An RNA of 177 nucleotides, treated with 2A3 and DMS and read out base by base.

RNA sequence: GGGAACGACUCGAGUAGAGUCGAAAAGAGGAUUCAACGAGCUUCGUAGCAACGAUAGCAACGUAGCUUUUGCUACGACCCUAGCUAUCGAGGGUAGCUACGUCCCAUGCUCGAGGGAAGAAUCCGAACGGAUAUCAGUAUUCGUACUGAUAUCCGUAAAAGAAACAACAACAACAAC
Reactivity to 2A3 in 0.01 (KOAc 150mM, MgCl2 10mM, bicine 150mM(pH8.5), 24C), signal-to-noise 9, nucleotides 027 to 126: g150a030g010g000a010u030u010c030a090a030c030g000a000g000c010u060u050c030g000u000a000g000c010a040a070c020g010a010u000a010g010c010a030a040c010g010u010a000g000c020u110u180u240u300g000c000u010a000c000g180a190c050c010c000u050a040g000c000u000a010u020c010g010a090g080g130g070u110a060g000c000u010a000c000g040u060c030c040c020a010u120g000c000u010c010g030a080g050g100g040a090a150g000a010a010u000c000c000g000a020
Reactivity to DMS in 0.01 (KOAc 150mM, MgCl2 10mM, bicine 150mM(pH8.5), 24C), signal-to-noise 9, nucleotides 027 to 126: g010a220g010g000a030u000u000c010a110a150c010g010a020g010c010u000u000c020g030u000a010g010c010a140a180c040g010a020u000a010g000c010a120a170c020g000u000a010g010c000u000u000u000u000g020c000u000a000c010g000a100c160c160c140u010a140g000c000u000a000u000c010g000a080g000g010g020u000a100g010c000u000a010c010g010u000c140c100c110a080u010g010c000u000c010g010a110g010g010g010a120a120g000a030a010u000c000c010g000a140

Values are in units of 0.01, from 0 to 300, in steps of 10. DMS (dimethyl sulfate) methylates the pairing face of unpaired adenines and cytosines. Conditions: 150 mM KOAc, 10 mM MgCl2 and 150 mM bicine (pH 8.5), 24 C. The data come from the RNA Mapping Database (RMDB), library OK2TRN. The DMS profile rests on 16,636 reads.